[RMDB]
RNA sequence: GGGAACGACUCGAGUAGAGUCGAAAAUUGUAGCGGCAUCUUUUCGCAAGGAAUGAUGCAUCGUUGAUCAAGAUAUCGAUUGCCGAAAAUUUACCUCACACGCGGAAGGAAGAUGGCUGUGCGCCAAUAUCCAUGGACUAUUCGUAGUCCAUGGAUAAAAAGAAACAACAACAACAAC
Reactivity to 2A3 in 0.01 (KOAc 150mM, MgCl2 10mM, bicine 150mM(pH8.5), 24C), signal-to-noise 3, nucleotides 027 to 126: u050u050g070u040a000g030c020g030g000c000a010u000c010u020u020u020u020c010g020c040a050a020g040g020a080a050u110g020a030u050g000c060a040u040c020g010u010u060g010a060u070c070a060a070g050a230u080a030u150c060g040a030u020u130g020c010c010g040a060a020a010a060u100u080u070a150c000c010u040c010a080c000a030c130g020c020g050g000a030a000g090g010a030a050g080a080u060g080g000c020u040g040u050g080c040g010c030c000a040a070
Reactivity to DMS in 0.01 (KOAc 150mM, MgCl2 10mM, bicine 150mM(pH8.5), 24C), signal-to-noise 5, nucleotides 027 to 126: u010u000g020u000a090g010c020g020g000c000a030u000c000u010u000u000u000c010g020c230a130a190g000g010a050a030u000g000a040u000g000c020a100u010c050g030u000u010g010a100u010c070a070a080g010a100u000a080u000c110g000a090u000u000g010c060c030g010a040a040a100a080u010u000u010a110c050c020u000c090a090c100a070c170g010c040g000g010a060a060g000g010a080a050g000a130u000g000g000c020u000g020u000g010c090g010c030c040a060a140
Source: RMDB library OK2TST, as collected in RNAgym. The record gives the reactivity of an RNA of 177 nucleotides to 2A3 and DMS. Conditions: 150 mM KOAc, 10 mM MgCl2 and 150 mM bicine (pH 8.5), 24 C. High 2A3 reactivity points to a flexible backbone, as in loops and unpaired stretches. Reactivities are given for positions 27 through 126. For DMS the reverse transcriptase was MarathonRT. For 2A3, 3,593 sequencing reads were counted.